[RMDB]
RNA sequence: GGGAACGACUCGAGUAGAGUCGAAAACGCCUAAUCUUCGGAUUAGGCGAAAAGAGGACGUGGAGGAGGCUUCAAAGGAAACGACGUUCACUCCCGAACAGAAAAGACUGGAGUUCGCUCCAGUCAAGUUAGUGUUUCAGUUCGCUGAAACACUAACAAAAGAAACAACAACAACAAC
Reactivity to DMS in 0.01 (KOAc 150mM, MgCl2 10mM, bicine 150mM(pH8.5), 24C), signal-to-noise 3, nucleotides 027 to 126: c010g020c020c000u010a000a000u010c020u000u010c190g020g000a010u000u000a010g000g000c000g000a000a010a070a060g020a110g010g000a080c030g030u000g030g040a120g010g000a100g000g000c030u000u000c100a060a090a150g010g010a070a100a190c030g000a090c000g000u000u000c060a160c060u000c000c000c000g000a110a070c180a100g010a090a100a150a090g000a010c000u000g000g000a020g010u010u010c270g020c010u010c010c010a000g000u000c000a010a040
Reactivity to 2A3 in 0.01 (KOAc 150mM, MgCl2 10mM, bicine 150mM(pH8.5), 24C), signal-to-noise 3, nucleotides 027 to 126: c010g000c010c000u010a000a000u010c010u040u050c190g060g020a000u000u010a000g010g000c000g000a000a000a000a010g050a030g000g000a020c040g000u070g030g070a080g040g020a040g030g020c010u110u070c150a180a130a070g090g010a070a160a030c080g050a010c020g020u040u010c030a030c060u030c010c000c000g000a060a020c040a070g160a090a090a050a020g000a000c000u010g010g010a000g000u040u090c170g020c100u000c010c000a000g000u000c000a000a000